[RMDB]
RNA sequence: GGGAACGACUCGAGUAGAGUCGAAAAGAUAUGGACCAGGACCUUGAGCAACAGCUAUGCUCGGAAACGAGCAUAGACAUGCUCUUGGUCUGGUCCUAAGUCAAAAGUUAGGACUUCGGUCCUAACACGAUAGGGUUCGGUUCGCCGAACCCUAUCGAAAAGAAACAACAACAACAAC
Reactivity to 2A3 in 0.01 (KOAc 150mM, MgCl2 10mM, bicine 150mM(pH8.5), 24C), signal-to-noise 1, nucleotides 027 to 126: g020a030u100a090u220g000g000a000c010c030a060g150g300a050c000c010u000u010g000a000g000c000a020a120c060a150g090c030u000a010u000g000c000u010c000g000g030a050a110a010c010g020a020g000c000a000u000a000g010a010c000a030u040g010c010u050c020u000u000g010g000u000c000u010g000g000u000c000c000u000a050a030g050u000c040a000a050a080a110g000u020u000a000g000g000a010c000u070u070c300g040g000u020c000c000u000a000a000c000a010
Reactivity to DMS in 0.01 (KOAc 150mM, MgCl2 10mM, bicine 150mM(pH8.5), 24C), signal-to-noise 2, nucleotides 027 to 126: g010a040u000a300u000g000g000a040c000c000a010g050g050a040c000c000u020u000g000a000g040c000a030a070c300a280g020c000u000a000u000g000c000u000c000g000g000a040a110a180c020g040a020g000c010a000u000a000g000a030c100a130u000g000c000u000c000u010u000g010g000u000c000u000g000g030u000c030c000u000a010a050g000u020c030a040a020a080a120g020u000u000a000g000g020a000c000u000u010c200g000g030u000c000c000u000a000a000c010a120